[RMDB]
RNA sequence: GGGAACGACUCGAGUAGAGUCGAAAACAUGGGUGAGGUACGAGGAAACAGUCUGAUAGUCACUGAAGACUGAUUAGAUCCAACUCUGAUCUCAGCAAAGCCGGACUACGCAUGUUCGCAUGCGUAGGUUGGAUAGUGUGUUCGCACACUAUCCAACAAAAGAAACAACAACAACAAC
Reactivity to 2A3 in 0.01 (KOAc 150mM, MgCl2 10mM, bicine 150mM(pH8.5), 24C), signal-to-noise 5, nucleotides 027 to 126: c050a110u160g070g010g060u040g040a000g010g020u080a020c030g020a020g010g070a060a060a010c020a010g020u000c000u010g010a030u030a040g060u080c040a040c230u160g140a130a030g010a020c010u020g020a020u030u040a020g010a040u030c020c020a020a030c020u000c000u020g030a010u000c010u000c010a030g060c040a030a110a000g030c020c040g060g050a030c000u000a000c000g010c000a010u000g030u030u080c230g000c100a000u000g010c000g010u000a000g000
Reactivity to DMS in 0.01 (KOAc 150mM, MgCl2 10mM, bicine 150mM(pH8.5), 24C), signal-to-noise 5, nucleotides 027 to 126: c090a090u030g010g000g010u010g010a090g000g020u000a050c060g020a250g010g000a110a090a140c270a130g000u000c000u000g010a090u000a040g020u020c090a090c230u020g020a160a090g000a010c010u000g010a040u000u000a040g010a040u000c030c100a070a210c100u000c000u000g010a040u010c010u000c020a060g010c120a040a050a140g010c050c030g020g000a300c010u000a000c000g000c000a010u000g020u020u000c230g030c000a000u000g000c000g000u000a010g000

An RNA of 177 nucleotides, treated with 2A3 and DMS and read out base by base. The reactions ran in a buffer of 150 mM KOAc, 10 mM MgCl2 and 150 mM bicine (pH 8.5), at 24 C. It was measured as part of the RMDB library RFMREP. For 2A3, 8,613 sequencing reads were counted. Reactivities are given for positions 27 through 126. For 2A3 the reverse transcriptase was SuperScript II with manganese.